[RMDB]
RNA sequence: GGGAACGACUCGAGUAGAGUCGAAAAGAUAUGGAACGUCGUAUGCCCAACAGCUCGGAAACGAGACAUGGGUGCAUACGCGUUCCUAAGUCAAAGUAAUCUGAGACCUUCGGGUCUCAGAUUACAACAAGUCUGCUAUGUUCGCAUAGCAGACUUGAAAAGAAACAACAACAACAAC
Reactivity to 2A3 in 0.01 (KOAc 150mM, MgCl2 10mM, bicine 150mM(pH8.5), 24C), signal-to-noise 3, nucleotides 027 to 126: g020a000u050a040u160g000g000a000a000c010g100u140c040g000u300a010u000g020c020c020c000a050a100c050a030g020c010u000c000g020g030a100a100a080c030g010a000g050a020c050a090u150g120g000g010u240g050c000a010u000a010c000g010c000g010u010u000c000c000u000a020a000g000u000c030a050a060a090g000u010a000a010u020c010u010g000a000g000a000c050c000u110u190c300g000g000g000u000c000u010c000a000g010a000u000u000a010c000a010a010
Reactivity to DMS in 0.01 (KOAc 150mM, MgCl2 10mM, bicine 150mM(pH8.5), 24C), signal-to-noise 3, nucleotides 027 to 126: g000a050u000a300u000g010g000a000a000c000g020u010c020g030u000a000u000g000c000c000c000a060a190c160a100g000c000u000c010g000g000a090a090a210c010g010a000g000a020c100a120u000g000g000g020u000g010c010a000u000a000c010g010c010g000u000u000c000c000u000a000a080g000u000c040a090a080a110g000u000a000a000u000c000u010g000a020g000a020c000c000u020u010c190g020g000g010u000c000u000c000a000g000a000u000u000a000c010a080a150